[RMDB]
RNA sequence: GGGAACGACUCGAGUAGAGUCGAAAAAGGAGUAAUCCUAAACAGGGUUUUCACCCUUCCUUUAGUUUCCUUCCUCUCCUGGAGAGGUCUUCUGCCCUAGCCCGGUCUUCGAAGCCUCCUUUGGCUACAAAAGUUAUAAGUUCGCUUAUAACUUUUGAAAAGAAACAACAACAACAAC
Reactivity to 2A3 in 0.01 (KOAc 150mM, MgCl2 10mM, bicine 150mM(pH8.5), 24C), signal-to-noise 2, nucleotides 027 to 126: a000g030g010a010g000u060a040a040u060c000c000u020a030a030a040c300a040g050g030g020u050u100u300u300c120a080c000c000c000u000u020c000c010u000u010u010a010g010u020u060u030c010c000u020u050c000c000u030c020u020c010c090u090g000g070a070g010a010g070g020u040c000u060u020c020u040g050c000c010c000u020a020g000c000c040c000g090g000u030c060u060u040c100g040a030a020g030c000c000u010c000c000u080u150u090g030g000c010u040a040
Reactivity to DMS in 0.01 (KOAc 150mM, MgCl2 10mM, bicine 150mM(pH8.5), 24C), signal-to-noise 5, nucleotides 027 to 126: a030g000g000a030g010u000a050a040u000c140c010u000a030a030a050c190a020g010g000g010u010u010u010u010c200a080c000c010c010u000u010c030c020u000u000u000a050g010u000u010u000c010c010u000u000c010c010u000c040u000c010c070u010g020g000a070g010a050g000g000u000c020u000u000c050u000g000c030c020c030u010a140g010c040c060c120g010g010u000c070u010u000c080g010a100a110g000c030c010u000c100c060u000u000u000g000g010c090u000a160